[RMDB]
RNA sequence: GGGAACGACUCGAGUAGAGUCGAAAACGAACAACCACACUGUAGAUCAACUCGCCUCCUGCGAAUGCUCUUCUUCUUCUUCUGGGGGAGCGAUGUUUUCGCGACCGGAAUAGAGUGGUUCCUGGAGGCACAUGUUGGCAUUCGUGCCAACAUGUGCAAAAGAAACAACAACAACAAC
Reactivity to DMS in 0.01 (KOAc 150mM, MgCl2 10mM, bicine 150mM(pH8.5), 24C), signal-to-noise 2, nucleotides 027 to 126: c050g000a060a100c110a040a060c010c060a140c170a080c120u030g000u000a030g010a120u010c040a060a070c050u070c030g000c000c000u000c000c000u000g010c250g000a040a000u010g000c020u000c010u010u000c140u020u030c050u040u050c050u000u000c000u040g010g000g000g010g020a090g000c090g000a000u020g020u040u000u020u000c010g010c000g000a110c020c000g020g010a040a030u000a050g000a000g030u000g070g020u000u000c000c030u020g000g000a020g000
Reactivity to 2A3 in 0.01 (KOAc 150mM, MgCl2 10mM, bicine 150mM(pH8.5), 24C), signal-to-noise 4, nucleotides 027 to 126: c040g060a030a000c030a010a060c040c070a080c030a030c060u130g100u170a080g050a230u150c020a010a070c040u000c090g020c000c000u070c010c010u060g030c060g010a020a010u060g020c020u020c010u100u010c020u070u030c010u100u020c010u110u070c030u090g060g000g000g020g020a030g010c000g010a060u060g210u220u070u060u010c020g000c020g030a010c020c020g030g000a030a050u050a050g050a000g010u050g060g000u030u030c010c000u050g030g040a060g060